[RMDB]
RNA sequence: GGGAACGACUCGAGUAGAGUCGAAAAAUUCCUGUACCACCUCUUCAUCGUUUGAGCAAUGGGGGGACGCAGGAGGAUAGGGUAAGCGCACUAUUGGACAUGUGCGUCUAAGCAGUUAGGCUGGGAAGACGUAGGUUGAAUUCGUUCAACCUACGUCAAAAGAAACAACAACAACAAC
Reactivity to 2A3 in 0.01 (KOAc 150mM, MgCl2 10mM, bicine 150mM(pH8.5), 24C), signal-to-noise 3, nucleotides 027 to 126: a000u010u010c000c010u000g020u030a090c000c070a110c010c010u020c010u180u100c020a070u120c060g140u090u110u250g210a160g000c060a090a080u080g010g020g000g000g000g000a040c060g000c010a010g000g030a010g070g000a090u130a050g070g030g010u070a080a030g010c020g000c020a010c010u110a080u120u210g080g030a020c030a100u090g020u010g000c000g000u000c000u010a020a010g020c020a030g000u060u190a030g080g000c040u020g000g000g050a060a060
Reactivity to DMS in 0.01 (KOAc 150mM, MgCl2 10mM, bicine 150mM(pH8.5), 24C), signal-to-noise 4, nucleotides 027 to 126: a150u000u000c000c000u000g020u000a070c090c060a190c040c010u000c030u000u000c060a060u000c050g000u000u010u000g020a110g020c110a110a030u010g010g000g000g000g000g000a090c210g000c060a030g010g020a040g000g010a130u000a070g000g000g010u000a080a130g000c020g000c010a020c010u000a160u010u010g010g010a160c150a080u000g010u000g010c020g000u000c010u000a080a060g020c090a100g010u000u010a090g030g000c040u000g010g000g010a130a090
Description
Source: RMDB library OK2TRN, as collected in RNAgym. An RNA of 177 nucleotides, treated with 2A3 and DMS and read out base by base. 2A3 adducts were read by reverse transcription with SuperScript II with manganese.